Overview:
Structure probing data (DMS and 2A3) for a 177-nucleotide construct. It was measured as part of the RMDB libraries RFM100 and RFMREP.
[RMDB]
RNA sequence: GGGAACGACUCGAGUAGAGUCGAAAAUCACGUCGAGCACGGUCUGGUCGCCGUACUCGCCCCUGCCGAUCUUGUUGACCUUCCCGUGCGCCAGCAGGUAGACGGCGUCCGCCCGGUUGCCCGCCUCGUUGCUUAUAAUUUUCGAAUUAUAAGCAACAAAAGAAACAACAACAACAAC
Reactivity to DMS in 0.01 (KOAc 150mM, MgCl2 10mM, bicine 150mM(pH8.5), 24C), signal-to-noise 9, nucleotides 027 to 126: u020c080a110c150g000u020c020g010a040g000c040a050c020g000g010u010c050u020g030g010u010c100g010c010c010g020u010a060c040u000c050g000c030c040c030c010u010g010c050c030g010a070u010c060u010u010g010u000u010g000a090c060c060u010u000c020c000c020g030u010g010c060g010c030c020a080g010c060a050g010g010u000a070g010a100c050g000g010c020g010u010c030c030g010c200c010c020g000g000u010u010g000c010c000c010g020c060c070u010c150
Reactivity to 2A3 in 0.01 (KOAc 150mM, MgCl2 10mM, bicine 150mM(pH8.5), 24C), signal-to-noise 9, nucleotides 027 to 126: u100c030a030c100g090u070c030g050a010g020c020a010c040g000g030u020c060u130g070g010u070c030g000c020c010g020u050a090c020u020c030g030c010c010c000c000u020g010c010c010g050a090u060c040u080u130g050u060u100g050a070c010c000u030u040c010c010c000g040u050g010c020g010c010c010a030g020c020a020g040g030u060a030g010a050c020g000g010c000g020u010c010c010g010c000c010c000g020g010u060u070g020c000c000c000g030c010c010u050c060

Annotation
The reactions ran in a buffer of 150 mM KOAc, 10 mM MgCl2 and 150 mM bicine (pH 8.5), at 24 C.